Structure probing data (2A3 and DMS) for a 177-nucleotide construct.
The data come from the RNA Mapping Database (RMDB), library TTRDES.
Reactivities are given for positions 27 through 126.
Conditions: 150 mM KOAc, 10 mM MgCl2 and 150 mM bicine (pH 8.5), 24 C.
2A3 is a SHAPE reagent: it acylates the 2'-hydroxyl of flexible nucleotides of all four kinds.
[RMDB]
RNA sequence: GGGAACGACUCGAGUAGAGUCGAAAAAGAUAUGGAGCGUCUCUAGCGUGCGCGAGGAUCAUAUACAGAGAUAUGGUCGGAAACGACCAUAUAUAAAGUAUGGGAGCGUCGGGCGCUCCUAAGUCAAUCUAAUGUCAUAGUUCGCUAUGACAUUAGAAAAAGAAACAACAACAACAAC
Reactivity to 2A3 in 0.01 (KOAc 150mM, MgCl2 10mM, bicine 150mM(pH8.5), 24C), signal-to-noise 3, nucleotides 027 to 126: a000g020a020u010a020u080g000g000a000g000c020g030u010c050u020c220u300a140g170c100g210u300g060c030g000c020g060a300g030g010a010u010c030a000u010a000u020a070c190a030g110a010g020a150u000a000u010g000g010u010c010g010g000a000a000a000c000g000a010c000c000a000u000a000u000a000u000a000a040a000g020u010a000u010g000g000g020a030g000c010g020u010c030g000g000g000c010g000c020u000c000c000u000a000a010g000u000c010a010a110
Reactivity to DMS in 0.01 (KOAc 150mM, MgCl2 10mM, bicine 150mM(pH8.5), 24C), signal-to-noise 6, nucleotides 027 to 126: a120g000a020u000a030u010g000g010a020g030c010g010u000c010u010c300u010a200g020c130g050u010g010c000g030c000g010a070g010g010a030u020c000a010u000a010u000a110c260a140g010a150g010a020u000a010u000g010g010u000c000g010g000a010a010a030c000g010a020c000c000a000u000a000u000a020u010a100a140a250g000u000a000u000g000g010g010a010g020c010g050u000c060g000g010g000c000g010c000u000c000c000u000a000a050g000u000c010a110a180